RNA sequence: GGGAACGACUCGAGUAGAGUCGAAAAGAUAUGGAUAUCGUGGAGGGACGAUGAAAUCGGAAACGAUGGAGUCCUGACACGAGUAUCCUAAGUCAAAGACAGGCGCAAGUUCGCUUGCGCCUGUCAAGUCAGUUUAUUUGUUCGCAAAUAAACUGACAAAAGAAACAACAACAACAAC
Reactivity to DMS in 0.01 (KOAc 150mM, MgCl2 10mM, bicine 150mM(pH8.5), 24C), signal-to-noise 3, nucleotides 027 to 126: g000a030u000a300u000g000g000a000u000a030u020c000g020u000g000g020a300g000g000g000a000c010g000a100u000g000a080a090a020u000c000g020g000a150a090a160c010g010a000u000g000g010a060g000u010c020c010u000g010a300c000a000c010g000a030g010u000a000u000c000c000u000a020a070g000u000c040a070a120a130g000a010c000a000g000g000c020g000c000a020a000g020u000u000c240g020c000u010u000g010c000g000c000c000u000g000u000c000a030a090
Reactivity to 2A3 in 0.01 (KOAc 150mM, MgCl2 10mM, bicine 150mM(pH8.5), 24C), signal-to-noise 1, nucleotides 027 to 126: g030a000u100a030u220g010g000a000u000a010u030c000g000u010g010g010a040g050g000g000a010c020g050a200u090g060a030a030a000u010c000g010g060a080a040a030c020g000a010u020g000g020a000g010u020c000c010u020g010a010c010a000c010g030a000g010u010a000u000c010c000u020a070a010g040u040c050a150a010a090g000a000c000a000g040g040c040g000c040a030a000g030u060u110c190g100c190u020u010g000c020g020c010c000u000g000u020c000a010a000